[RMDB]
RNA sequence: GGGAACGACUCGAGUAGAGUCGAAAAUUGCUCAAUACACAGUAUCAAUCACAGUUGCUUACAUGUCAUCAUGAUUUUCAAGUCAAUGAAGUAUUAGCAUAUGAUGUGAUGCCAUAUAUUAUGAAAAGUUUUGGUGUAGAUUCGUCUACACCAAAACAAAAGAAACAACAACAACAAC
Reactivity to DMS in 0.01 (KOAc 150mM, MgCl2 10mM, bicine 150mM(pH8.5), 24C), signal-to-noise 2, nucleotides 027 to 126: u020u040g060c020u010c000a150a050u050a060c090a030c290a100g010u000a060u030c070a120a030u000c000a010c030a040g030u000u010g000c000u000u000a080c090a100u020g020u000c010a020u000c120a100u000g000a000u000u040u110u100c210a110a010g010u030c030a080a050u000g000a010a010g000u000a080u070u000a040g000c000a000u020a040u010g000a020u000g000u000g000a040u000g000c020c040a070u030a150u000a020u010u050a070u010g000a100a050a150a100
Reactivity to 2A3 in 0.01 (KOAc 150mM, MgCl2 10mM, bicine 150mM(pH8.5), 24C), signal-to-noise 5, nucleotides 027 to 126: u150u170g080c020u020c030a050a080u120a130c130a000c010a090g020u010a000u040c010a060a010u020c010a020c030a160g140u040u010g010c000u030u030a020c010a080u280g090u120c010a020u000c020a030u010g020a040u040u060u100u110c080a150a090g020u010c010a010a060u010g040a020a020g010u110a080u170u080a020g000c010a000u030a010u160g020a020u050g080u040g110a010u020g000c000c030a050u080a060u050a040u160u170a100u140g160a050a080a000a030